[RMDB]
RNA sequence: GGGAACGACUCGAGUAGAGUCGAAAAGAAAAUAGCGUAAUGGACAUUGAGAAUGUACGCUAAGUGUGUGUUGUAUAAAUAACGUCCUAUUGAACACACACACAGUUGGACCUAAUGUCCAAAAAAACACUCACUCAAAGUUCGCUUUGAGUGAGUGAAAAGAAACAACAACAACAAC
Reactivity to DMS in 0.01 (KOAc 150mM, MgCl2 10mM, bicine 150mM(pH8.5), 24C), signal-to-noise 2, nucleotides 027 to 126: g000a090a100a060a110u000a030g030c010g010u000a010a090u020g000g010a050c000a050u010u010g020a080g000a130a070u010g040u010a020c000g010c000u000a020a120g010u010g000u000g030u000g000u000u000g040u000a040u000a070a020a000u000a020a080c270g000u000c170c070u000a060u000u000g010a140a030c020a020c010a020c000a010c010a010c030a150g020u000u010g000g010a200c030c040u000a040a040u000g000u010c000c030a000a000a070a080a090a020a080
Reactivity to 2A3 in 0.01 (KOAc 150mM, MgCl2 10mM, bicine 150mM(pH8.5), 24C), signal-to-noise 2, nucleotides 027 to 126: g130a010a080a000a040u080a020g000c010g000u020a050a080u080g020g000a000c010a020u080u130g040a060g040a110a090u190g030u050a000c010g010c010u040a080a070g000u030g000u000g000u010g030u040u150g030u070a060u090a150a100a020u050a050a060c060g130u090c040c040u020a030u000u060g060a060a000c000a010c000a000c010a000c010a000c040a000g120u120u110g070g050a020c020c040u050a040a010u060g010u000c020c000a130a000a000a000a000a000a000
Overview:
This 177-nucleotide RNA was probed chemically with DMS and 2A3. The data come from the RNA Mapping Database (RMDB), library M2PK90. For DMS the reverse transcriptase was MarathonRT. The RNA was probed in 150 mM KOAc, 10 mM MgCl2 and 150 mM bicine (pH 8.5) at 24 C.